[RMDB]
RNA sequence: GGGAACGACUCGAGUAGAGUCGAAAAGUAAAGGCGGAGGAGGGUUUUGGCUUGCGCUCGGUCCGCCCGCGCGUGGUGUGGGCUGGAUUUCGUGUGUGGAGGAUGAUUAAUGCCGCGCGCCCAGGAAGACAAGACAGUAGUUCGCUACUGUCUUGUCAAAAGAAACAACAACAACAAC
Reactivity to DMS in 0.01 (KOAc 150mM, MgCl2 10mM, bicine 150mM(pH8.5), 24C), signal-to-noise 2, nucleotides 027 to 126: g030u000a050a080a130g000g010c030g020g010a090g010g010a110g020g000g040u000u000u000u010g020g010c080u000u000g000c080g000c020u000c040g010g010u010c000c000g010c010c010c000g020c050g030c060g030u020g010g010u010g030u000g010g000g000c040u000g020g020a090u000u000u000c080g030u000g020u010g020u000g020g010a070g000g020a100u000g010a080u010u000a090a080u000g000c030c020g000c060g010c050g000c010c050c020a150g010g010a090a110
Reactivity to 2A3 in 0.01 (KOAc 150mM, MgCl2 10mM, bicine 150mM(pH8.5), 24C), signal-to-noise 1, nucleotides 027 to 126: g060u100a030a060a090g040g000c050g020g000a040g060g040a040g040g090g000u060u090u130u120g090g010c040u000u080g000c030g000c030u000c040g040g010u000c010c030g000c020c020c000g000c000g000c000g060u130g130g070u180g040u000g000g000g000c060u100g020g000a000u060u190u130c100g000u030g030u020g050u110g080g030a070g030g030a050u070g000a010u080u170a130a050u080g080c000c000g010c000g000c010g000c050c030c000a000g000g080a030a070

The record gives the reactivity of an RNA of 177 nucleotides to DMS and 2A3. Conditions: 150 mM KOAc, 10 mM MgCl2 and 150 mM bicine (pH 8.5), 24 C. 2A3 adducts were read by reverse transcription with SuperScript II with manganese.